[RMDB]
Background
Source: RMDB library ARCHII, as collected in RNAgym. An RNA of 207 nucleotides, treated with 2A3 and DMS and read out base by base.
RNA sequence: GGGAACGACUCGAGUAGAGUCGAAAAAGCGAAGGCUUGGCUCAAACGGCUGCUAAAGUUGGAGGGCAAUGCGUGAGGCUGGUUUCACAGAGCAGCGAUUACUUCCCGCUUACAGCAGUGGACGGAUCACAGUUUGGCGUCGCUCAGAACCACUAUGCAAUUUAAACAGGUUCGCCUGUUUAAAUUGAAAAGAAACAACAACAACAAC
Reactivity to 2A3 in 0.01 (KOAc 150mM, MgCl2 10mM, bicine 150mM(pH8.5), 24C), signal-to-noise 4, nucleotides 027 to 156: a000g010c010g000a040a010g210g000c010u030u020g020g000c000u010c020a040a040a040c020g040g000c000u000g000c000u030a110a020a000g000u020u010g000g000a010g000g010g060c120a020a040u210g140c010g010u040g020a050g020g040c010u040g020g070u110u260u260c170a170c000a040g020a010g030c010a000g000c010g020a020u020u020a020c000u040u000c000c000c010g020c000u020u050a080c070a060g000c000a010g010u040g050g060a040c030g020g040a090u110c040a030c020a060g000u000u050u030g030g000c010g010u010c000g000c000u010c010a050g020a080a050c010c010a030c080u080a090u250g050
Reactivity to DMS in 0.01 (KOAc 150mM, MgCl2 10mM, bicine 150mM(pH8.5), 24C), signal-to-noise 2, nucleotides 027 to 156: a020g010c040g060a050a070g010g020c020u000u010g010g000c000u000c020a120a100a120c040g010g010c000u020g000c000u000a090a080a050g000u000u010g080g030a090g030g000g000c010a060a060u000g020c030g020u010g050a190g020g020c020u000g010g000u000u000u010c120a110c050a070g010a080g040c010a280g000c020g020a110u010u000a030c030u000u000c020c010c020g000c050u000u000a060c100a070g050c060a080g010u000g030g010a100c000g000g010a150u000c060a100c110a040g010u010u010u000g020g010c020g030u000c030g000c000u000c010a150g000a130a090c010c000a040c070u000a210u000g000
Conditions: 150 mM KOAc, 10 mM MgCl2 and 150 mM bicine (pH 8.5), 24 C. For DMS the reverse transcriptase was MarathonRT.